[RMDB]
RNA sequence: GGGAACGACUCGAGUAGAGUCGAAAAAUAUCUGCAGCCCUAUGGGAAGGUUGUUGACCUCGGAUGUGGCAGAGGGGGCUGGAGCUAUUAUGCCGCCACCAUCCGCAAAGUGCAGGAGGUGAGAGGAAUGAAUAGUGAGGUUCGCCUCACUAUUCAUAAAAGAAACAACAACAACAAC
Reactivity to 2A3 in 0.01 (KOAc 150mM, MgCl2 10mM, bicine 150mM(pH8.5), 24C), signal-to-noise 1, nucleotides 027 to 126: a000u150a030u030c030u050g050c030a000g000c000c010c010u080a200u270g120g030g000a090a020g060g000u020u010g010u080u070g110a060c000c000u000c030g020g060a190u070g010u060g070g000c040a040g020a060g110g050g000g000g000c030u010g030g000a010g000c020u000a020u210u010a010u200g020c000c000g130c000c000a010c010c010a260u000c000c000g020c000a220a270a090g140u190g000c040a060g020g020a030g010g000u030g010a100g000a000g000g030a080
Reactivity to DMS in 0.01 (KOAc 150mM, MgCl2 10mM, bicine 150mM(pH8.5), 24C), signal-to-noise 3, nucleotides 027 to 126: a060u020a040u000c000u000g010c020a020g000c010c010c010u000a100u010g010g000g010a150a090g010g000u010u000g000u000u010g000a120c040c040u010c030g010g020a120u010g020u000g020g000c030a090g000a110g010g010g020g000g010c020u000g000g010a040g010c130u010a060u000u000a130u010g010c010c000g000c020c010a020c040c030a050u000c000c010g010c060a120a070a180g010u000g010c020a030g030g000a120g010g010u000g000a100g010a030g000g020a160